[RMDB]
RNA sequence: GGGAACGACUCGAGUAGAGUCGAAAAGAUAUGGAGCAUUCCGUGGAUCAAGGCCUGCGGUCGGAAACGACCGACAGGCUGGUCCACGGAGAUGCUCCUAAGUCAAAGGUGGCGUUCGCGCCACCAACACUAACACAUGGUUCGCCAUGUGUUAGUGAAAAGAAACAACAACAACAAC
Reactivity to 2A3 in 0.01 (KOAc 150mM, MgCl2 10mM, bicine 150mM(pH8.5), 24C), signal-to-noise 5, nucleotides 027 to 126: g030a010u100a060u230g000g000a010g010c000a010u030u010c000c010g000u000g020g000a020u010c170a300a180g290g110c000c000u000g020c000g010g010u010c010g010g020a110a080a100c020g020a010c000c010g050a080c000a000g000g000c000u000g000g000u000c000c000a000c000g000g000a010g000a000u000g000c000u000c000c000u010a010a020g030u010c050a090a080a110g010g000u000g000g020c060g040u070u100c300g000c010g000c180c000a000c000c000a000a000
Reactivity to DMS in 0.01 (KOAc 150mM, MgCl2 10mM, bicine 150mM(pH8.5), 24C), signal-to-noise 7, nucleotides 027 to 126: g000a060u000a300u000g010g000a020g020c000a010u000u000c000c000g010u000g000g010a000u000c010a170a180g030g010c000c000u000g010c020g000g000u000c000g020g000a110a120a240c010g010a020c000c000g000a120c000a000g000g010c000u000g000g000u000c000c000a010c000g000g000a010g010a010u000g000c000u000c000c000u000a000a080g010u000c050a110a140a160g010g020u000g000g010c000g020u000u020c250g020c020g020c010c010a010c000c000a030a100
The data come from the RNA Mapping Database (RMDB), library TTRDES. This 177-nucleotide RNA was probed chemically with 2A3 and DMS. For 2A3, 22,246 sequencing reads were counted. 2A3 adducts were read by reverse transcription with SuperScript II with manganese.